[RMDB]
RNA sequence: GGGAACGACUCGAGUAGAGUCGAAAAACAAAACGUUCUGGAAAGUGGGUGUGAGGGUCAGAUGUGGAGGGAGUGAAAUCUUCCCAGGGAGAGAAUGUCUCUGGGUCAACCUGCUCCUGCUGGGCUGCGAUAUUGCAGGCUUCGGCCUGCAAUAUCGAAAAGAAACAACAACAACAAC
Reactivity to DMS in 0.01 (KOAc 150mM, MgCl2 10mM, bicine 150mM(pH8.5), 24C), signal-to-noise 1, nucleotides 027 to 126: a100c080a090a080a050a240c110g020u020u010c050u020g010g010a080a110a110g040u010g010g000g000u000g010u010g010a130g000g010g000u000c060a090g010a150u010g010u000g010g010a230g000g000g050a030g000u010g020a030a070a130u000c190u000u010c020c000c000a010g010g010g000a030g020a170g020a120a100u020g020u000c000u020c020u000g000g010g010u000c150a010a020c120c020u000g000c010u000c020c030u000g010c070u000g000g030g010c060u000g000